[RMDB]
RNA sequence: GGGAACGACUCGAGUAGAGUCGAAAACGUUGAUCUUGCUGGCGAUACGGUAGUAGUUCCAUAUGUACUUGCAGAGACAAGCAUCGUGCAAGCAGUAGCGUUCGAUCUGCAGCGCGAUACGCAUCGAAUAGUCGCGGUACAUGUUCCUCAGAUCGACUGUACACAAUGUUUUCGAACAUUGUGUACAAAAAGAAACAACAACAACAAC
Reactivity to 2A3 in 0.01 (KOAc 150mM, MgCl2 10mM, bicine 150mM(pH8.5), 24C), signal-to-noise 9, nucleotides 027 to 156: c050g010u020u030g010a040u010c030u040u140g020c070u050g060g020c080g080a080u070a120c070g090g050u070a050g020u030a020g020u140u020c040c020a030u050a030u110g020u010a010c010u120u300g010c040a030g060a020g010a150c030a070a060g010c000a010u010c010g010u020g010c030a120a160g000c010a030g010u120a030g050c090g140u130u180c090g070a130u050c020u010g000c020a030g000c010g000c010g000a000u030a060c080g000c020a070u080c070g090a140a090u140a130g070u050c040g000c000g010g000u010a020c010a030u040g030u000u030c010c000u040c020a010g000a040u010c020g030a030c030
Reactivity to DMS in 0.01 (KOAc 150mM, MgCl2 10mM, bicine 150mM(pH8.5), 24C), signal-to-noise 5, nucleotides 027 to 156: c040g010u010u010g010a040u000c040u000u000g020c010u010g020g000c060g010a160u000a060c030g010g010u010a080g020u000a110g030u000u000c020c030a160u010a070u000g020u000a020c020u000u010g060c020a120g020a300g000a110c050a070a110g020c030a140u000c030g030u000g020c010a050a180g000c040a080g020u000a110g010c120g020u000u010c090g000a100u000c000u000g020c020a300g020c010g040c020g000a040u000a020c040g000c070a050u000c070g020a080a170u000a160g030u000c070g020c050g020g040u000a040c040a040u000g010u000u010c020c010u010c020a100g010a080u000c030g020a060c080

Structure probing data (2A3 and DMS) for a 207-nucleotide construct. The data come from the RNA Mapping Database (RMDB), library OK3TST. Reactivities are rounded to 0.1 and cut off at 0 and 3. Conditions: 150 mM KOAc, 10 mM MgCl2 and 150 mM bicine (pH 8.5), 24 C.